[RMDB]
RNA sequence: GGGAACGACUCGAGUAGAGUCGAAAAGUGCCGGCAAUACAGUGUGUAUGGAGGCCUCAAUGGCUCGGAAGUGCCAGCAAACCGGCGUAGAUAUUAGCAGACGUAUGGGCGUAAGACUUUUAUUGAAAAAAGUACAUAAGCUUCGGCUUAUGUACAACUGAAAGAGAUACUUCGGUAUCUCUUUCAGAAAAGAAACAACAACAACAAC
Reactivity to DMS in 0.01 (KOAc 150mM, MgCl2 10mM, bicine 150mM(pH8.5), 24C), signal-to-noise 2, nucleotides 027 to 156: g010u000g020c010c030g030g010c040a120a060u010a060c070a150g030u000g020u010g030u000a070u010g020g010a150g010g000c000c020u000c130a080a100u000g010g020c030u000c010g020g000a120a120g020u000g020c010c040a080g000c040a050a160a070c050c030g010g010c030g000u000a100g000a090u010a070u000u000a050g040c030a170g030a060c050g010u000a110u000g030g000g040c040g000u020a100a140g010a100c040u010u000u000u000a120u040u000g000a000a070a060a090a080a180g000u000a000c000a010u000a030a020g020c010u000u000c300g050g010c000u000u000a000u000g020u010a010c000a030a050
Reactivity to 2A3 in 0.01 (KOAc 150mM, MgCl2 10mM, bicine 150mM(pH8.5), 24C), signal-to-noise 3, nucleotides 027 to 156: g080u050g020c000c000g020g020c050a050a090u070a060c050a070g080u030g030u070g010u160a050u100g030g070a040g020g050c000c020u100c030a160a170u230g000g000c040u040c090g070g040a080a060g030u040g050c040c000a020g040c100a020a080a100c030c020g000g000c010g030u030a020g030a080u030a050u070u140a050g020c010a000g010a060c020g040u090a100u130g020g090g000c010g020u050a070a010g030a020c000u090u120u080u080a150u110u170g030a030a030a000a090a050a010g000u000a000c000a000u000a000a000g010c000u010u060c230g090g010c000u000u010a000u000g010u000a000c000a000a020